[RMDB]
RNA sequence: GGGAACGACUCGAGUAGAGUCGAAAAGGGGAUAGUUGAAGCUGUAGAAGCGUACCGAGGUUCCUACAGGCCUCGUUAAACAGGUAGGAAAACAAUACUCGCAAACGACUACGAGUACGCAUUAGCCGCUUAGUCGGCUAACGUUCUUUCUGAUUUUAUGCAGAUAAUUGUUCGCAAUUAUCUGCAUAAAAGAAACAACAACAACAAC
Reactivity to 2A3 in 0.01 (KOAc 150mM, MgCl2 10mM, bicine 150mM(pH8.5), 24C), signal-to-noise 2, nucleotides 027 to 156: g000g000g000g010a050u060a050g090u060u070g050a020a030g000c050u020g040u110a030g010a120a010g000c030g010u020a030c010c000g010a010g000g000u020u080c000c000u030a000c000a020g120g110c000c000u010c030g030u010u010a020a000a000c010a010g000g000u010a000g020g000a000a110a000a000c070a030a060u080a040c010u020c000g060c090a090a040a290c130g080a110c120u110a020c060g000a000g020u010a030c060g020c020a090u000u030a000g000c000c010g020c090u110u110a050g100u300c000g000g000c030u000a000a000c010g000u030u000c040u050u110u020c040u030g110a150u000u000u000u010
Background
Chemical mapping of a 207-nucleotide RNA with 2A3. Reactivities are rounded to 0.1 and cut off at 0 and 3. The reactions ran in a buffer of 150 mM KOAc, 10 mM MgCl2 and 150 mM bicine (pH 8.5), at 24 C.